RNA sequence: GGGAACGACUCGAGUAGAGUCGAAAAGCGGCUGCCGGGGAUGAUCGCCGGCGUGGCGGCGAAACGAAUGAACCGCGAACAGUUCUUCCGCGCGGCGUCGGGGCUCGAUGAGGAUCGCCUACGGAAGGGUAGUGGUUAUUUUCGAAUAACCACUACCAAAAGAAACAACAACAACAAC
Reactivity to DMS in 0.01 (KOAc 150mM, MgCl2 10mM, bicine 150mM(pH8.5), 24C), signal-to-noise 2, nucleotides 027 to 126: g010c030g000g010c020u000g010c020c020g040g000g000g000a120u010g000a090u030c050g000c010c010g010g000c010g000u010g000g010c010g000g000c020g000a020a090a110c100g000a110a080u050g030a130a140c050c000g000c030g000a070a090c100a160g000u010u000c010u000u000c030c050g020c050g000c070g000g000c030g000u000c030g010g000g000g000c040u000c020g000a070u000g000a100g000g010a090u000c020g010c020c000u000a080c080g000g000a110a050g000
Reactivity to 2A3 in 0.01 (KOAc 150mM, MgCl2 10mM, bicine 150mM(pH8.5), 24C), signal-to-noise 6, nucleotides 027 to 126: g030c010g060g020c020u060g010c010c000g000g010g030g020a060u130g030a060u120c050g040c050c020g000g000c000g010u030g040g000c020g010g010c010g060a100a050a040c090g040a040a070u170g030a060a070c030c010g010c030g030a080a030c040a050g030u060u050c000u050u000c000c010g020c000g000c020g050g000c010g030u040c010g010g030g020g000c030u030c060g110a140u130g040a040g060g000a030u070c030g020c010c010u040a060c040g030g010a040a030g050
An RNA of 177 nucleotides, treated with DMS and 2A3 and read out base by base. The RNA was probed in 150 mM KOAc, 10 mM MgCl2 and 150 mM bicine (pH 8.5) at 24 C. The 2A3 profile rests on 5,853 reads. For DMS, 6,703 sequencing reads were counted.